[RMDB]
RNA sequence: GGGAACGACUCGAGUAGAGUCGAAAAAUAGGAACCCUCUCUCUUUUAGUGGGGGGCUGAGGAGGGCUAAAUCAACCACACAUGCGAAAAAUUAUAGCAUUUUCCUCCAUCGCCCACCUAGGGUGAACACCCUACUACCAUUCGUGGUAGUAGGGUGAAAAGAAACAACAACAACAAC
Reactivity to 2A3 in 0.01 (KOAc 150mM, MgCl2 10mM, bicine 150mM(pH8.5), 24C), signal-to-noise 2, nucleotides 027 to 126: a010u150a050g140g000a020a030c020c010c000u000c010u020c020u040c020u000u150u030u160a070g040u140g010g030g060g020g000g020c040u060g010a010g000g000a000g000g000g000c000u020a020a000a040u060c050a020a040c000c000a060c000a000c000a090u050g040c050g130a200a100a000a040a000u230u160a190u080a100g000c010a010u090u000u160u030c000c000u000c000c010a160u020c010g040c010c000c000a040c020c010u000a070g020g000g010u030g000a030a000
Reactivity to DMS in 0.01 (KOAc 150mM, MgCl2 10mM, bicine 150mM(pH8.5), 24C), signal-to-noise 3, nucleotides 027 to 126: a100u020a110g010g020a130a070c020c000c010u000c070u000c040u010c020u000u000u000u010a090g010u010g010g000g060g010g000g030c200u010g000a030g030g000a020g010g010g010c070u000a020a050a070u010c090a090a110c090c060a100c140a100c150a050u020g010c040g000a040a080a050a080a090u000u000a110u010a040g030c000a080u000u000u010u000c000c000u000c040c020a090u000c060g010c010c000c040a070c050c100u000a070g010g020g030u000g000a090a210